[RMDB]
RNA sequence: GGGAACGACUCGAGUAGAGUCGAAAAGGAGGGAUCCUGCUUAGAAGUCACGCUGGCCAAGCCCGUGGACAAGGAACAGUACUCCCGCUACCAGAAGGCAGCCAAGGGUGGUGGUGGCUCGGCUGAGCGCUGUGAGAAUAUUCGUAUUCUCACAGCGAAAAGAAACAACAACAACAAC
Reactivity to 2A3 in 0.01 (KOAc 150mM, MgCl2 10mM, bicine 150mM(pH8.5), 24C), signal-to-noise 3, nucleotides 027 to 126: g050g020a030g000g010g030a020u050c020c010u030g000c010u050u080a040g040a180a000g080u050c010a030c150g010c050u060g030g000c010c020a040a030g020c020c000c010g050u040g020g020a020c020a070a090g080g010a120a010c000a050g030u090a070c040u010c010c020c010g030c030u070a040c000c010a040g030a090a070g050g000c030a020g020c000c040a050a040g080g000g000u070g010g050u030g000g040u040g000g000c010u030c030g050g000c020u050g040a030g050
Reactivity to DMS in 0.01 (KOAc 150mM, MgCl2 10mM, bicine 150mM(pH8.5), 24C), signal-to-noise 6, nucleotides 027 to 126: g000g010a070g010g020g010a110u000c080c010u000g010c070u000u010a090g000a110a160g000u010c040a040c060g020c060u000g010g010c020c110a130a110g010c000c030c020g000u000g000g010a040c080a080a110g000g000a060a060c080a060g000u010a130c100u000c020c010c020g000c060u000a100c040c030a110g000a080a120g000g010c030a040g010c030c070a070a100g010g010g020u000g000g010u010g010g020u000g000g000c040u000c060g000g000c030u000g010a090g010
Source information
An RNA of 177 nucleotides, treated with 2A3 and DMS and read out base by base. Conditions: 150 mM KOAc, 10 mM MgCl2 and 150 mM bicine (pH 8.5), 24 C. Source: RMDB library OK2TRN, as collected in RNAgym. Values cover nucleotides 27 to 126. For 2A3, 5,514 sequencing reads were counted.